[RMDB]
An RNA of 177 nucleotides, treated with 2A3 and DMS and read out base by base. 2A3 adducts were read by reverse transcription with SuperScript II with manganese. The 2A3 profile rests on 2,393 reads.
RNA sequence: GGGAACGACUCGAGUAGAGUCGAAAACUACAUAGUUUCGACUAUGUAGAAACCAUUAGGAAGCAUGCAGAUGCAUAUGGACGAGGGCAACUAACCUAUUGGGAACAGCAGGUUUCGACCUGCUGAACUCCAAUGUCGUGUUCGCACGACAUUGGAGAAAAGAAACAACAACAACAAC
Reactivity to 2A3 in 0.01 (KOAc 150mM, MgCl2 10mM, bicine 150mM(pH8.5), 24C), signal-to-noise 2, nucleotides 027 to 126: c000u020a000c000a000u010a000g000u030u030u090c160g050a020c000u000a000u010g000u000a010g020a020a010a010c010c000a040u030u070a040g020g030a070a040g060c070a040u060g000c030a020g060a290u090g000c040a040u050a110u210g060g010a020c060g020a090g000g020g000c020a050a060c010u040a020a050c010c030u050a080u070u140g040g000g040a070a050c000a000g000c010a000g020g010u000u100u130c130g070a040c000c000u000g010c020u010g000a000a000
Reactivity to DMS in 0.01 (KOAc 150mM, MgCl2 10mM, bicine 150mM(pH8.5), 24C), signal-to-noise 3, nucleotides 027 to 126: c000u000a000c020a000u000a000g020u010u010u030c190g010a050c000u010a010u000g000u000a000g000a050a070a140c010c010a120u010u000a100g010g000a130a100g010c070a040u000g000c090a080g000a050u010g010c040a150u000a100u000g000g020a090c070g010a080g010g000g010c060a060a060c070u000a080a100c030c040u000a050u000u010g000g000g010a110a280c020a010g000c000a010g020g000u000u000u010c170g000a040c010c000u000g000c000u000g000a020a150